RNA sequence: GGGAACGACUCGAGUAGAGUCGAAAAGCACCGUAACAGUAGAAGUCCCUCCAACGCGACCUGAUGUAUUGGGACCAACGGACCUUAUGGAAGAUGUUGCGGUGGCCUACGGUUACGAUAAUAUUACCGAUAUCCUGAGCUUCGGCUCAGGAUAUCGAAAAGAAACAACAACAACAAC
Reactivity to DMS in 0.01 (KOAc 150mM, MgCl2 10mM, bicine 150mM(pH8.5), 24C), signal-to-noise 1, nucleotides 027 to 126: g000c000a040c000c000g020u000a020a010c000a050g000u020a070g060a180a140g010u000c020c030c090u000c040c070a170a100c060g000c000g000a040c170c030u010g000a290u030g020u020a100u010u010g000g000g000a130c060c160a080a180c180g000g000a300c010c050u000u000a010u010g000g030a120a080g020a180u020g020u030u000g010c010g010g000u000g000g000c180c020u000a150c140g020g000u000u000a000c140g020a120u000a050a040u000a110u000u000a070c030
Reactivity to 2A3 in 0.01 (KOAc 150mM, MgCl2 10mM, bicine 150mM(pH8.5), 24C), signal-to-noise 1, nucleotides 027 to 126: g070c020a040c050c000g010u010a010a000c000a080g070u090a030g080a230a030g070u020c000c030c000u060c030c010a090a010c070g000c000g030a050c000c000u130g010a090u080g090u100a080u090u120g050g000g000a120c000c010a120a060c030g060g050a050c020c000u150u190a140u200g030g120a080a020g030a060u130g010u000u000g000c090g010g000u010g000g070c000c000u040a090c050g050g030u040u040a010c020g080a040u090a180a110u120a160u200u010a120c000
The record gives the reactivity of an RNA of 177 nucleotides to DMS and 2A3.
Values cover nucleotides 27 to 126.
The DMS profile rests on 584 reads.
For DMS the reverse transcriptase was MarathonRT.
It was measured as part of the RMDB library OK2TST.